[RMDB]
RNA sequence: GGGAACGACUCGAGUAGAGUCGAAAAGUACUAAAACUAGUCAAUGCUUUGUUUUUUAGUAUCAAAAUUCAAAAAUUUUCUGGGGAGGACCCCUAGACUCCCUUUGUAAUUCAAACUCAAUUACAUCCGUACUACCAGUGUUCGCACUGGUAGUACGAAAAGAAACAACAACAACAAC
Reactivity to 2A3 in 0.01 (KOAc 150mM, MgCl2 10mM, bicine 150mM(pH8.5), 24C), signal-to-noise 6, nucleotides 027 to 126: g010u000a000c000u020a000a010a030a010c010u030a030g070u110c150a160a180u280g090c030u130u210u120g070u070u110u040u010u030u050a020g000u030a010u120c040a040a090a090a080u190u140c080a070a060a020a150a170u070u110u100u100c070u060g000g020g000g010a010g020g020a080c020c000c000c000u010a020g030a050c000u000c000c000c000u000u060u030g010u020a020a020u070u040c240a220a120a130c120u090c140a050a040u010u030a040c020a040u040c060
This 177-nucleotide RNA was probed chemically with 2A3. It was measured as part of the RMDB library OK1LIB. The reactions ran in a buffer of 150 mM KOAc, 10 mM MgCl2 and 150 mM bicine (pH 8.5), at 24 C. For 2A3 the reverse transcriptase was SuperScript II with manganese. The 2A3 profile rests on 2,456 reads. Reactivities are given for positions 27 through 126.